[RMDB]
RNA sequence: GGGAACGACUCGAGUAGAGUCGAAAAGAUAUGGACUAAGCUGUAGGGAGACGCCAGGUCGGAAACGACCUGUCGUCGAAGAACUACAGAACGCGUCCUAAGUCAAACGUUCUCUUCGGAGAACGAACAACAUAGCGAGGUUCGCCUCGCUAUGUUGAAAAGAAACAACAACAACAAC
Reactivity to DMS in 0.01 (KOAc 150mM, MgCl2 10mM, bicine 150mM(pH8.5), 24C), signal-to-noise 3, nucleotides 027 to 126: g000a000u010a060u020g000g000a000c000u020a140a080g000c030u000g000u000a010g000g040g020a030g000a020c000g010c060c000a010g010g020u000c000g000g000a020a010a030c000g020a010c000c000u000g000u000c000g000u000c000g000a070a140g000a140a220c000u000a010c000a010g010a170a100c240g010c230g020u000c010c000u000a010a140g000u000c000a060a060a160c020g010u000u000c000u000c000u000u010c250g020g010a010g000a000a000c000g010a050a170
Reactivity to 2A3 in 0.01 (KOAc 150mM, MgCl2 10mM, bicine 150mM(pH8.5), 24C), signal-to-noise 1, nucleotides 027 to 126: g000a010u030a000u080g000g000a010c030u120a120a120g060c010u030g010u010a010g000g000g000a020g000a000c000g010c010c000a010g000g000u000c000g010g010a000a010a000c010g020a000c010c000u010g010u000c010g000u000c000g000a010a010g000a000a000c010u010a010c000a010g030a080a020c130g070c140g040u000c000c000u000a010a000g000u010c040a130a050a120c030g020u010u010c030u000c000u020u040c290g160g000a020g000a000a010c000g050a060a030
Structure probing data (DMS and 2A3) for a 177-nucleotide construct. Values cover nucleotides 27 to 126. Values are in units of 0.01, from 0 to 300, in steps of 10. For 2A3, 4,763 sequencing reads were counted.